Annotation:
Structure probing data (DMS) for a 177-nucleotide construct. Reactivities are given for positions 27 through 126. It was measured as part of the RMDB library OK2TST.

RNA sequence: GGGAACGACUCGAGUAGAGUCGAAAAAAGAGUUUCGGCAUCUCUGACAAAAUGGCGUUGAUGGGGAACUGGAUACGAUGGUACGAACGAUUGCGAAGGAAAGAACCAACACAGGAACUAAGGAGGGCAGAACCUAUCCUUUCGAGGAUAGGUUCUGAAAAGAAACAACAACAACAAC
Reactivity to DMS in 0.01 (KOAc 150mM, MgCl2 10mM, bicine 150mM(pH8.5), 24C), signal-to-noise 1, nucleotides 027 to 126: a080a020g010a070g010u000u000u000c060g000g000c040a090u000c020u000c010u000g020a190c090a010a020a050a070u000g010g020c050g000u030u010g050a070u000g010g000g000g010a070a090c060u000g040g010a100u030a030c110g000a050u040g000g010u000a090c240g010a050a090c080g000a040u000u000g000c000g010a060a040g020g010a020a040a100g020a090a070c060c000a010a040c110a050c110a110g000g050a040a100c060u030a050a130g010g030a040g010g010g010